RNA sequence: GGGAACGACUCGAGUAGAGUCGAAAAAUAAACCGCGUAGGGAACCAAGCCUUGAGUUCUGCAGACCCACGGUACAAGGCUUGGUUCUAGACAUGUGGGUCUCCAGUCCCACUCCCUACGCCAAAAACAUAAAUGAGUUCUUCGGAACUCAUUUAUGAAAAGAAACAACAACAACAAC
Reactivity to 2A3 in 0.01 (KOAc 150mM, MgCl2 10mM, bicine 150mM(pH8.5), 24C), signal-to-noise 3, nucleotides 027 to 126: a000u070a010a040a010c050c050g000c010g020u010a000g000g010g000a000a000c000c000a010a000g000c000c010u120u040g070a130g130u270u100c030u060g010c040a030g100a300c000c020c020a010c030g010g020u060a040c020a000a010g000g000c000u000u000g000g000u000u000c000u000a010g000a000c050a060u130g000u000g000g010g000u000c030u020c030c020a070g060u090c000c000c010a010c020u020c010c010c000u010a010c000g000c000c000a030a110a010a020a000
Reactivity to DMS in 0.01 (KOAc 150mM, MgCl2 10mM, bicine 150mM(pH8.5), 24C), signal-to-noise 5, nucleotides 027 to 126: a060u000a060a090a090c120c130g010c000g010u010a020g000g010g010a050a020c010c000a010a020g000c000c010u000u000g000a170g010u000u010c070u000g010c050a060g010a130c030c020c020a180c050g000g010u010a100c010a010a000g010g010c010u000u000g000g010u000u000c040u000a030g010a080c180a070u000g010u000g000g000g000u000c110u000c120c140a190g010u000c000c000c000a030c030u000c020c010c000u000a020c010g020c010c180a020a050a060a090a080
Overview: This 177-nucleotide RNA was probed chemically with 2A3 and DMS. The 2A3 profile rests on 5,842 reads. Source: RMDB library M2PK90, as collected in RNAgym. DMS adducts were read by reverse transcription with MarathonRT.